The data come from the RNA Mapping Database (RMDB), library OK3TST.
The record gives the reactivity of an RNA of 207 nucleotides to 2A3 and DMS.
RNA sequence: GGGAACGACUCGAGUAGAGUCGAAAAAUGCGCCGGAUGUAAUAUUUCGUGUUGACCCCGGACGCGCCAACAAGCGCAGUUUCGAGAGCGUCCAAUUUCUUUCCAGGAAGGACCUUCUGGCACACGUCGAGAGUCGCUUCGCGAAUUUCUGCAGAAGUGUAAAGUAGAGAUUCGUCUCUACUUUACAAAAAGAAACAACAACAACAAC
Reactivity to 2A3 in 0.01 (KOAc 150mM, MgCl2 10mM, bicine 150mM(pH8.5), 24C), signal-to-noise 2, nucleotides 027 to 156: a000u030g000c030g000c030c020g060g010a050u060g000u110a120a130u080a200u140u140u120c040g000u060g030u090u100g080a100c010c000c000c020g000g010a030c000g010c000g000c020c000a110a120c050a050a050g070c010g000c060a020g000u010u080u180c040g040a050g000a000g090c040g010u000c000c000a050a080u130u070u070c050u120u100u000c020c030a020g000g090a000a110g040g010a060c020c010u070u030c020u030g010g000c010a050c000a000c080g080u090c030g050a020g020a020g130u020c020g000c120u080u080c040g010c040g020a090a080u040u100u050c040u040g000c050a030g010a280a020g010
Reactivity to DMS in 0.01 (KOAc 150mM, MgCl2 10mM, bicine 150mM(pH8.5), 24C), signal-to-noise 2, nucleotides 027 to 156: a050u000g020c000g020c010c020g010g020a050u000g000u010a160a140u000a100u000u000u000c040g010u010g050u010u000g010a090c020c030c050c050g010g010a020c020g030c030g070c020c000a080a090c080a120a090g020c030g030c020a090g020u010u010u000c050g020a110g010a080g020c010g010u000c030c020a080a160u000u000u010c030u000u000u010c070c060a210g010g000a060a120g000g000a030c060c000u000u000c030u000g070g000c040a120c160a060c110g000u010c040g000a120g010a080g020u000c010g040c030u000u020c020g010c030g020a100a170u000u000u000c040u000g010c020a110g000a050a090g020

For DMS, 3,281 sequencing reads were counted.
The reactions ran in a buffer of 150 mM KOAc, 10 mM MgCl2 and 150 mM bicine (pH 8.5), at 24 C.